[RMDB]
RNA sequence: GGGAACGACUCGAGUAGAGUCGAAAACGUAGGGAUAAGCUUUACGCCCGUGACGGAAACAACCGAGACUAAUGUUAAGGUCUCUAAAAUUGGCUAAGUGCGAUUUAAAGAGGUUAAUGACCGAAGAGGAUAUCUAACUCUUCGGAGUUAGAUAUCCAAAAGAAACAACAACAACAAC
Reactivity to 2A3 in 0.01 (KOAc 150mM, MgCl2 10mM, bicine 150mM(pH8.5), 24C), signal-to-noise 2, nucleotides 027 to 126: c020g010u010a000g000g010g030a170u150a230a130g080c020u040u030u050a030c000g080c040c000c040g050u050g070a020c020g010g070a050a070a010c040a030a020c050c030g010a010g010a020c040u080a140a070u150g050u230u100a090a060g020g000u020c000u000c000u010a080a070a010a010u090u030g180g000c020u060a190a030g130u150g080c010g000a010u000u040u110a090a110a020g050a050g020g000u010u050a070a020u130g060a050c010c020g000a020a010g080a050
Reactivity to DMS in 0.01 (KOAc 150mM, MgCl2 10mM, bicine 150mM(pH8.5), 24C), signal-to-noise 2, nucleotides 027 to 126: c070g030u020a080g010g030g000a210u000a140a160g000c030u000u000u000a090c060g010c070c010c000g010u020g000a160c030g000g000a080a130a120c160a040a070c110c110g000a120g010a000c010u020a030a160u010g020u000u000a060a230g000g020u000c000u000c000u000a130a050a030a060u020u000g010g050c020u000a110a120g020u020g020c020g000a030u010u000u000a050a150a070g010a120g010g020u000u000a030a040u000g000a200c020c010g000a060a090g020a190
Chemical mapping of a 177-nucleotide RNA with 2A3 and DMS.
For 2A3 the reverse transcriptase was SuperScript II with manganese.
For 2A3, 1,150 sequencing reads were counted.
For DMS the reverse transcriptase was MarathonRT.
It was measured as part of the RMDB library RFMREP.